This 177-nucleotide RNA was probed chemically with DMS and 2A3.
For DMS, 2,473 sequencing reads were counted.
The reactions ran in a buffer of 150 mM KOAc, 10 mM MgCl2 and 150 mM bicine (pH 8.5), at 24 C.

RNA sequence: GGGAACGACUCGAGUAGAGUCGAAAAGAUAUGGAGUGUAGGGAGCUGACACGUCGGAAACGACGUGCAGCAUCGAUCUACCUCCUAAGUCAAAAGCCAGAGUAAUCCUUCGGGAUUACUCUGGCAACCUUAAGAUCGGGUUCGCCCGAUCUUAAGGAAAAGAAACAACAACAACAAC
Reactivity to DMS in 0.01 (KOAc 150mM, MgCl2 10mM, bicine 150mM(pH8.5), 24C), signal-to-noise 2, nucleotides 027 to 126: g000a020u010a300u010g010g000a020g010u010g010u000a010g010g010g010a040g040c000u000g010a140c010a000c000g010u010c000g020g000a040a050a120c010g020a000c000g030u000g010c010a010g030c000a150u000c150g010a060u000c000u000a000c000c010u000c000c020u010a040a030g000u010c020a080a050a120a110g010c010c000a020g000a020g000u000a010a000u000c000c000u010u010c170g040g010g000a010u000u000a000c000u010c000u000g010g000c000a000a000
Reactivity to 2A3 in 0.01 (KOAc 150mM, MgCl2 10mM, bicine 150mM(pH8.5), 24C), signal-to-noise 2, nucleotides 027 to 126: g010a000u050a020u090g010g010a020g000u300g020u120a000g010g000g010a010g000c000u000g030a170c010a000c020g010u020c000g020g000a040a040a030c000g010a010c000g000u000g010c010a010g000c000a030u160c020g010a030u000c000u010a010c000c010u010c000c000u010a110a030g010u040c010a040a130a070a090g000c010c000a020g010a010g020u010a020a000u020c010c000u080u230c300g010g000g000a000u000u000a000c000u000c000u000g010g020c000a020a000